[RMDB]
RNA sequence: GGGAACGACUCGAGUAGAGUCGAAAACUGUGGCACCAUUCGCCCCCAGGGAUUUGCUGCUAUCAGGGUGACAUUAUGCUCCAACACUGUGCAGAAAUACGAGCUGGCACUCGUGGUGGACGUGGAGACGCUAACUAGCGUUCGCGCUAGUUAGCGUAAAAGAAACAACAACAACAAC
Reactivity to DMS in 0.01 (KOAc 150mM, MgCl2 10mM, bicine 150mM(pH8.5), 24C), signal-to-noise 2, nucleotides 027 to 126: c020u010g020u000g000g010c020a020c070c010a120u000u000c140g010c030c000c010c040c040a110g000g000g010a090u000u000u010g040c050u000g000c010u000a090u010c050a090g010g000g020u000g000a100c110a100u010u010a050u010g000c120u000c000c010a060a050c070a020c080u000g000u000g010c030a070g000a060a030a070u000a040c210g000a050g050c010u000g030g030c030a050c020u000c070g010u010g000g010u000g030g010a030c030g010u000g020g010a120g000

Chemical mapping of a 177-nucleotide RNA with DMS. The DMS profile rests on 1,179 reads. The reactions ran in a buffer of 150 mM KOAc, 10 mM MgCl2 and 150 mM bicine (pH 8.5), at 24 C.